[RMDB]
This 177-nucleotide RNA was probed chemically with 2A3 and DMS. Reactivities are given for positions 27 through 126. The reactions ran in a buffer of 150 mM KOAc, 10 mM MgCl2 and 150 mM bicine (pH 8.5), at 24 C. As a SHAPE reagent, 2A3 marks flexible, mostly unpaired nucleotides at the ribose 2'-OH.
RNA sequence: GGGAACGACUCGAGUAGAGUCGAAAACCUGCGGGAUUCUGAUGGGAAUGACAACGGUCGGUCCAUUUGACUUUAUCAUUACGAUGGUUCUAGUCGUGUUAUGGUAAAGGUCUGUUGAGUGCAAUUGACAGCUAACAAUAUUCGUAUUGUUAGCUGUAAAAGAAACAACAACAACAAC
Reactivity to 2A3 in 0.01 (KOAc 150mM, MgCl2 10mM, bicine 150mM(pH8.5), 24C), signal-to-noise 4, nucleotides 027 to 126: c010c000u000g000c080g040g030g030a120u150u070c030u100g070a080u100g030g000g050a080a120u080g020a040c050a190a050c120g090g020u040c010g010g010u030c010c000a050u130u020u120g000a010c000u020u000u030a010u000c000a010u020u070a020c010g010a000u060g100g060u300u080c110u130a040g010u020c000g000u020g020u130u100a020u010g000g010u000a040a050a010g020g010u000c060u050g090u000u100g060a180g050u140g040c020a050a090u030u070g020
Reactivity to DMS in 0.01 (KOAc 150mM, MgCl2 10mM, bicine 150mM(pH8.5), 24C), signal-to-noise 8, nucleotides 027 to 126: c020c000u000g010c130g010g000g010a060u000u010c030u000g000a090u010g010g010g000a060a050u020g000a070c060a100a190c170g020g010u000c030g000g000u010c020c020a100u020u030u010g010a130c010u000u000u000a010u000c010a010u000u010a010c000g010a010u010g010g020u020u020c190u020a190g010u000c010g000u000g000u010u010a000u000g000g000u000a010a010a020g000g010u000c050u000g000u010u000g000a120g000u010g000c070a080a190u010u010g010